[RMDB]
RNA sequence: GGGAACGACUCGAGUAGAGUCGAAAAGAUGCUUUCCAUGGUGAUAAGAAAUCUGGUGGUGUUCAUAAUGGUACUACUAUUGUUCUGUGGAAAUGGAACAAAGGAGAUAACCAGCGAUGGAGGAUCACAGACCCAGAUAGUUCGCUAUCUGGGUCUGAAAAGAAACAACAACAACAAC
Reactivity to DMS in 0.01 (KOAc 150mM, MgCl2 10mM, bicine 150mM(pH8.5), 24C), signal-to-noise 2, nucleotides 027 to 126: g020a070u010g000c020u020u000u000c000c010a140u000g000g060u020g020a080u000a100a100g010a120a070a050u000c020u000g010g040u000g040g010u000g030u010u000c050a060u000a050a150u000g000g010u000a070c000u000a040c010u000a170u000u000g020u010u000c000u000g000u000g010g060a070a110a000u000g010g020a020a010c000a020a030a070g010g010a040g010a120u010a100a060c020c000a050g000c160g010a070u000g000g010a070g020g000a040u010c080a150
Reactivity to 2A3 in 0.01 (KOAc 150mM, MgCl2 10mM, bicine 150mM(pH8.5), 24C), signal-to-noise 1, nucleotides 027 to 126: g030a010u110g040c010u080u060u000c000c010a050u110g030g000u020g020a120u070a220a040g130a080a140a070u100c110u110g020g020u060g070g020u060g030u110u150c060a040u140a300a120u140g030g040u080a020c010u010a020c000u120a270u300u060g040u020u030c020u020g020u020g090g080a090a150a080u100g000g000a000a000c000a010a020a050g050g010a050g000a000u070a080a050c010c000a010g000c020g010a010u080g000g050a010g050g010a020u050c050a020
Conditions: 150 mM KOAc, 10 mM MgCl2 and 150 mM bicine (pH 8.5), 24 C. The record gives the reactivity of an RNA of 177 nucleotides to DMS and 2A3. 2A3 adducts were read by reverse transcription with SuperScript II with manganese. It was measured as part of the RMDB library OK2TRN. For DMS the reverse transcriptase was MarathonRT. Values cover nucleotides 27 to 126.